[RMDB]
RNA sequence: GGGAACGACUCGAGUAGAGUCGAAAAUGCUGGGAUUACAGGCGUAAGCCAUCGCGCCCGGCCCAUGGCUUUGUUAUUGCUGAUAUUAUUAUUACAGUUAUUACGCGUGUCAACCGAAAGGGGAGUAAUCACUCUUACGAUUCGUCGUAAGAGUGAUAAAAGAAACAACAACAACAAC
Reactivity to DMS in 0.01 (KOAc 150mM, MgCl2 10mM, bicine 150mM(pH8.5), 24C), signal-to-noise 5, nucleotides 027 to 126: u010g010c040u000g010g010g010a140u000u000a070c100a060g000g020c010g020u010a070a100g020c010c010a040u000c090g010c110g010c010c010c010g020g000c030c050c050a090u000g010g000c030u010u000u000g010u000u010a050u000u000g000c040u000g010a110u000a040u010u010a110u000u010a100u010u000a130c030a040g000u000u000a070u000u000a050c040g010c060g010u000g000u000c070a070a150c040c010g010a030a070a120g000g010g000g010a150g010u000a080
Reactivity to 2A3 in 0.01 (KOAc 150mM, MgCl2 10mM, bicine 150mM(pH8.5), 24C), signal-to-noise 3, nucleotides 027 to 126: u150g000c040u050g020g020g040a090u080u100a090c020a060g010g060c020g040u080a050a070g000c010c010a040u030c030g020c020g010c050c010c000g010g020c000c000c030a040u030g030g000c000u110u130u200g060u110u080a080u050u090g000c000u020g110a120u050a050u230u130a130u210u050a080u090u090a130c010a000g020u020u010a050u090u030a030c030g000c060g020u040g030u020c080a070a070c040c020g040a070a010a020g040g010g000g000a060g050u060a040
Conditions: 150 mM KOAc, 10 mM MgCl2 and 150 mM bicine (pH 8.5), 24 C. Structure probing data (DMS and 2A3) for a 177-nucleotide construct. Values cover nucleotides 27 to 126. Reactivities are rounded to 0.1 and cut off at 0 and 3. The data come from the RNA Mapping Database (RMDB), library OK2TRN. For DMS the reverse transcriptase was MarathonRT.